An RNA of 177 nucleotides, treated with DMS and 2A3 and read out base by base. For DMS, 5,086 sequencing reads were counted. For DMS the reverse transcriptase was MarathonRT. For 2A3 the reverse transcriptase was SuperScript II with manganese. Source: RMDB library OK2TRN, as collected in RNAgym. The reactions ran in a buffer of 150 mM KOAc, 10 mM MgCl2 and 150 mM bicine (pH 8.5), at 24 C.
RNA sequence: GGGAACGACUCGAGUAGAGUCGAAAAUGGUACGCGCUCUAGCAUGUGUCAUGUACUCUAGCUAGCUACUAGGAUCAUCAUGGAUCCGCUGCGAGCACGAUCGACAUGCGUGAUCUCUAGUGUGAGGGUAGUUCGUACUGUUCGCAGUACGAACUACAAAAGAAACAACAACAACAAC
Reactivity to DMS in 0.01 (KOAc 150mM, MgCl2 10mM, bicine 150mM(pH8.5), 24C), signal-to-noise 4, nucleotides 027 to 126: u000g010g020u010a040c050g010c110g030c050u010c090u010a080g030c020a120u010g010u010g000u000c020a040u000g010u000a120c040u000c030u000a100g010c020u000a070g020c070u000a040c030u000a020g000g010a030u000c010a020u000c030a060u000g000g000a030u000c010c080g000c030u020g020c170g010a150g010c030a070c170g000a040u000c020g010a140c040a010u000g000c220g030u000g000a030u000c010u010c010u000a030g000u000g020u000g000a130g010g010
Reactivity to 2A3 in 0.01 (KOAc 150mM, MgCl2 10mM, bicine 150mM(pH8.5), 24C), signal-to-noise 3, nucleotides 027 to 126: u040g020g020u070a020c020g040c010g000c040u040c070u110a030g010c010a030u110g020u020g030u070c020a060u050g060u100a050c030u020c000u010a020g040c020u010a030g010c020u030a020c000u000a020g030g000a000u000c000a010u010c010a010u030g020g010a000u010c000c030g000c010u030g050c050g080a090g040c000a020c100g030a030u020c010g200a140c020a030u040g030c050g030u020g010a010u010c200u010c020u080a020g010u020g060u030g110a100g040g080